[RMDB]
RNA sequence: GGGAACGACUCGAGUAGAGUCGAAAAUCAGCCGUUCAAGGCGACGUGCACGGCCGCCGCCUACUACCCGCGUAACCCCGUGGAGUUUGUCUGGUUCGAGGACGACCACCAGGUGUUUAACCCGGGCCCGCAGCAUAGAAUUCGUUCUAUGCUGCGGAAAAGAAACAACAACAACAAC
Reactivity to 2A3 in 0.01 (KOAc 150mM, MgCl2 10mM, bicine 150mM(pH8.5), 24C), signal-to-noise 6, nucleotides 027 to 126: u140c020a020g080c010c020g060u100u120c090a050a030g040g000c010g000a020c010g090u160g020c040a050c120g130g000c010c010g010c010c000g010c010c010u030a070c060u050a030c010c010c000g010c010g030u030a040a040c010c010c010c000g080u170g020g020a070g010u070u220u300g030u070c040u040g140g070u290u150c130g120a090g050g040a030c000g020a020c010c000a060c030c000a020g000g000u020g020u010u040u080a050a050c060c080c030g000g020g020c010
Reactivity to DMS in 0.01 (KOAc 150mM, MgCl2 10mM, bicine 150mM(pH8.5), 24C), signal-to-noise 2, nucleotides 027 to 126: u060c130a120g010c030c000g050u040u030c090a150a090g010g000c030g000a020c090g040u000g000c090a070c030g000g000c040c010g050c000c090g020c030c010u000a130c110u020a160c000c000c000g010c270g060u000a070a030c040c040c000c050g020u040g010g000a170g010u000u030u070g020u000c020u010g000g030u000u020c250g030a200g030g000a080c040g010a030c050c000a000c010c040a040g000g000u000g010u010u020u050a080a040c070c060c010g040g020g020c180
This 177-nucleotide RNA was probed chemically with 2A3 and DMS. For DMS the reverse transcriptase was MarathonRT. The DMS profile rests on 2,246 reads. It was measured as part of the RMDB library OK1LIB. The reactions ran in a buffer of 150 mM KOAc, 10 mM MgCl2 and 150 mM bicine (pH 8.5), at 24 C.